Chemical mapping of a 177-nucleotide RNA with 2A3 and DMS. The RNA was probed in 150 mM KOAc, 10 mM MgCl2 and 150 mM bicine (pH 8.5) at 24 C. The DMS profile rests on 3,680 reads.

RNA sequence: GGGAACGACUCGAGUAGAGUCGAAAAGAAGCCGGAAACAAAUUGGGUAAAAUUUCUUCAGAAGAUUAAUGAUGAGGGUUUGGAUCUUGAUUCCUUAAUUAUUGGGCUUCGGGCAAAGGAGAGGGAGCGUAUUCGACUUUUUCGAAAGUCGAAUACGAAAAGAAACAACAACAACAAC
Reactivity to 2A3 in 0.01 (KOAc 150mM, MgCl2 10mM, bicine 150mM(pH8.5), 24C), signal-to-noise 5, nucleotides 027 to 126: g050a030a000g040c020c010g020g130a040a100a030c070a030a130a130u150u090g040g000g030u060a040a040a050a130u060u100u010c000u100u050c010a070g060a140a030g010a120u140u180a130a080u220g050a040u020g020a040g020g040g020u090u150u130g090g040a040u080c050u030u110g030a060u130u100c000c000u040u030a070a070u100u120a070u070u080g060g020g020c000u030u020c000g000g000g000c110a110a110a030g040g060a140g010a100g020g010g000a030g020
Reactivity to DMS in 0.01 (KOAc 150mM, MgCl2 10mM, bicine 150mM(pH8.5), 24C), signal-to-noise 3, nucleotides 027 to 126: g020a060a060g020c000c020g000g020a060a080a060c060a030a090a120u010u010g010g010g000u040a050a060a110a110u000u020u020c020u010u030c110a090g000a120a090g010a040u010u020a060a040u020g010a070u000g010a100g010g000g000u000u010u030g000g000a080u010c020u010u030g020a080u010u010c000c020u020u000a020a040u010u010a090u020u000g000g000g000c010u000u010c010g020g010g000c140a060a080a170g000g000a100g020a110g000g010g010a120g010